This 207-nucleotide RNA was probed chemically with 2A3 and DMS. The DMS profile rests on 4,883 reads. For 2A3 the reverse transcriptase was SuperScript II with manganese. It was measured as part of the RMDB library OK3TST.

[RMDB]
RNA sequence: GGGAACGACUCGAGUAGAGUCGAAAAAACAACCACAUAAACCAGUUUACCACACCUACGAGGGACACGCUUGGCCUCUUCGUGCCAGACUGCACGUCCGACGCGUUGGCAGCAUACUAUUGCUCCACGUGGAGUAGCCAUAAGAUAUUCACACCUAAAUUCAACAGAAGUUCGCUUCUGUUGAAUUAAAAGAAACAACAACAACAAC
Reactivity to 2A3 in 0.01 (KOAc 150mM, MgCl2 10mM, bicine 150mM(pH8.5), 24C), signal-to-noise 5, nucleotides 027 to 156: a000a000c100a050a020c060c030a060c040a100u150a060a070a040c040c020a040g010u050u100u110a070c040c020a050c020a050c020c020u100a050c040g060a110g040g040g010a030c040a010c100g030c030u050u060g010g010c000c010u070c000u130u070c060g030u070g010c020c000a050g040a120c050u080g000c010a010c080g030u010c020c040g050a030c010g010c000g050u130u110g080g000c100a000g000c000a020u130a160c060u220a190u190u140g010c000u000c000c000a020c030g010u030g010g010a020g020u040a020g000c000c020a060u070a150a050g030a050u110a110u130u120c050a060c010a030c100c030u050a100
Reactivity to DMS in 0.01 (KOAc 150mM, MgCl2 10mM, bicine 150mM(pH8.5), 24C), signal-to-noise 3, nucleotides 027 to 156: a080a000c030a130a120c020c010a040c030a040u010a060a120a090c040c040a060g040u000u000u000a100c000c040a070c030a030c060c020u000a140c090g000a220g030g030g010a070c020a060c090g020c030u030u000g020g040c010c010u000c080u000u020c020g050u020g060c000c020a090g010a080c040u000g020c070a080c120g010u000c030c020g030a080c040g020c020g030u000u010g030g030c030a070g000c030a110u000a080c080u000a080u000u000g020c010u010c010c010a060c110g030u030g030g000a090g000u000a070g020c070c050a130u010a050a080g020a100u000a070u000u000c050a080c020a080c040c010u010a090